[RMDB]
RNA sequence: GGGAACGACUCGAGUAGAGUCGAAAAUAAGCCAAAGGGAUGUCCCGACCGGAGGCCGACAAUUCAGGGAACCGGAUGUCAUCACGUUGUUGCAGUACCAGAUGGCAUCUUAAAUCCGAUCUGCAAAAAAAGUCUUACACCUUCGGGUGUAAGACAAGUUAAGACAUCAGUUCGCUGAUGUCUUAACAAAAGAAACAACAACAACAAC
Reactivity to 2A3 in 0.01 (KOAc 150mM, MgCl2 10mM, bicine 150mM(pH8.5), 24C), signal-to-noise 3, nucleotides 027 to 156: u070a010a020g000c000c000a000a000a000g010g000g000a010u020g020u010c000c000c000g000a000c000c000g000g010a020g000g000c000c010g030a020c040a300a170u260u290c120a060g000g020g010a010a010c020c000g010g000a000u000g000u010c000a000u010c000a010c170g050u090u080g110u080u030g010c010a000g010u070a060c030c040a080g000a010u000g000g000c010a000u010c000u000u000a020a020a020u130c090c000g060a070u040c000u000g030c000a040a000a020a020a010a000a070g000u000c000u010u000a000c000a010c000c000u030u120c210g100g000g000u000g000u000a000a000g000a000c000a000a000
Reactivity to DMS in 0.01 (KOAc 150mM, MgCl2 10mM, bicine 150mM(pH8.5), 24C), signal-to-noise 2, nucleotides 027 to 156: u000a100a110g030c030c020a020a300a190g000g000g010a090u010g000u000c000c010c000g000a160c010c030g010g010a300g020g040c000c010g000a160c070a030a150u000u000c130a110g040g020g000a220a090c010c040g000g000a040u000g000u010c010a020u000c000a290c140g020u000u000g010u000u000g000c030a120g020u000a050c030c000a140g010a020u010g020g000c000a000u000c010u000u010a050a090a130u000c030c000g010a040u000c030u000g000c030a020a000a080a040a100a060a180g020u000c010u000u000a020c000a000c010c000u000u000c300g050g000g030u000g000u000a010a000g000a000c000a000a040
Notes
An RNA of 207 nucleotides, treated with 2A3 and DMS and read out base by base. Values cover nucleotides 27 to 156. For DMS the reverse transcriptase was MarathonRT. The data come from the RNA Mapping Database (RMDB), library M2RFPK. The RNA was probed in 150 mM KOAc, 10 mM MgCl2 and 150 mM bicine (pH 8.5) at 24 C.